[RMDB]
RNA sequence: GGGAACGACUCGAGUAGAGUCGAAAAUCUUUAGGCCGGCACGUGGUUAGGUGAUAGAUGGGUAUGCGGUAAUAAUUAUUGCCGGCAGUUUGGGAUACGGACCCGAACAGUAGUAGUGCCAGGGGAGGGGCUGGGGUGGGUUCGCUUGUCUCGGCCCAAAAGAAACAACAACAACAAC
Reactivity to DMS in 0.01 (KOAc 150mM, MgCl2 10mM, bicine 150mM(pH8.5), 24C), signal-to-noise 7, nucleotides 027 to 126: u000c020u000u000u010a130g010g020c010c010g010g010c050a060c130g010u000g000g010u000u000a060g010g020u010g020a140u010a100g010a110u000g010g000g000u000a060u000g020c030g010g010u000a040a050u000a110a090u010u010a200u000u000g010c000c000g010g020c020a040g010u000u000u000g000g000g010a150u010a110c260g010g010a150c010c010c010g010a010a020c030a110g010u000a110g010u000a100g000u000g010c040c050a080g000g000g020g010a120g010
Reactivity to 2A3 in 0.01 (KOAc 150mM, MgCl2 10mM, bicine 150mM(pH8.5), 24C), signal-to-noise 5, nucleotides 027 to 126: u040c000u020u120u080a070g020g010c000c000g020g010c010a010c060g040u070g030g090u100u090a070g040g040u100g070a120u090a140g120a080u090g020g000g040u070a030u090g050c020g020g040u030a040a030u090a090a110u220u220a050u070u050g010c000c000g020g030c000a010g000u010u020u020g010g020g000a030u040a200c140g060g120a030c020c010c010g000a010a000c010a010g060u100a010g010u030a010g030u010g020c030c020a010g010g020g000g110a080g030

Conditions: 150 mM KOAc, 10 mM MgCl2 and 150 mM bicine (pH 8.5), 24 C. The record gives the reactivity of an RNA of 177 nucleotides to DMS and 2A3. The DMS profile rests on 11,683 reads. The 2A3 profile rests on 7,201 reads.